Structure probing data (2A3 and DMS) for a 177-nucleotide construct. Source: RMDB library OK1LIB, as collected in RNAgym. The RNA was probed in 150 mM KOAc, 10 mM MgCl2 and 150 mM bicine (pH 8.5) at 24 C. For DMS, 1,396 sequencing reads were counted. For 2A3 the reverse transcriptase was SuperScript II with manganese.

RNA sequence: GGGAACGACUCGAGUAGAGUCGAAAAUCAGAUCGGGUGGCGGUGCUCGCGGUGCCUGCAAGCGAUGAUUCGAUGGCUCUGUGUCAUCUGGUCUGCUCUGAUGGUGGCUCAGGGACACCCCGGGGUGGGCGGAGGCCUCGUUCGCGAGGCUUCCGCCAAAAGAAACAACAACAACAAC
Reactivity to 2A3 in 0.01 (KOAc 150mM, MgCl2 10mM, bicine 150mM(pH8.5), 24C), signal-to-noise 3, nucleotides 027 to 126: u070c010a020g050a040u050c030g060g020g020u030g040g040c050g090g010u130g020c050u050c030g030c110g020g070u050g030c000c020u050g000c030a030a100g030c020g050a040u110g020a070u210u070c070g020a030u080g010g000c000u020c080u180g210u040g000u020c010a030u000c030u070g010g020u000c010u010g050c000u020c020u090g050a070u130g000g070u040g000g000c010u000c050a050g000g060g020a080c010a050c000c030c010c030g040g000g000g070u130g020
Reactivity to DMS in 0.01 (KOAc 150mM, MgCl2 10mM, bicine 150mM(pH8.5), 24C), signal-to-noise 1, nucleotides 027 to 126: u050c070a030g000a000u030c020g030g020g060u030g000g040c100g000g050u010g000c250u000c040g020c100g050g000u010g000c000c080u000g020c160a090a070g040c090g010a000u040g000a120u020u000c220g010a070u000g010g000c000u000c220u010g000u010g040u030c010a030u040c030u010g030g000u000c080u000g000c090u010c010u000g000a020u010g010g040u000g000g000c090u000c090a050g000g010g000a060c120a130c020c010c050c060g030g000g000g060u070g010